The record gives the reactivity of an RNA of 207 nucleotides to 2A3. As a SHAPE reagent, 2A3 marks flexible, mostly unpaired nucleotides at the ribose 2'-OH.

[RMDB]
RNA sequence: GGGAACGACUCGAGUAGAGUCGAAAAGCGUAUUCUUCGGAAUACGCAAAAAGCGUACUACUGUGUGGUAUUGUAGAAACGAUCCCAAAUAGGAUCGUAUUUCGCAGAUAAUACGUAACAUCACAGUAUCGCAAAAAACUCGGCUUCGGCCGAGUAACACUCCUGCCAAGUUCGCUUGGCAGGAGUGAAAAGAAACAACAACAACAAC
Reactivity to 2A3 in 0.01 (KOAc 150mM, MgCl2 10mM, bicine 150mM(pH8.5), 24C), signal-to-noise 1, nucleotides 027 to 156: g000c000g010u010a000u000u000c020u000u090c180g090g000a000a040u020a020c010g000c010a000a000a000a030a000g020c030g020u060a030c080u000a000c000u000g000u000g000u030g060g000u000a010u070u000g050u020a070g030a040a000a000c000g000a000u070c000c000c110a200a220a040u250a130g000g000a000u000c020g000u010a140u000u030u000c040g000c020a010g040a160u100a080a000u030a080c010g030u070a160a030c060a210u210c000a030c010a000g000u000a020u300c120g000c020a000a240a000a000a000a000c000u000c000g000g020c000u020u020c180g060g040c000c000g000a000g000u000a000a010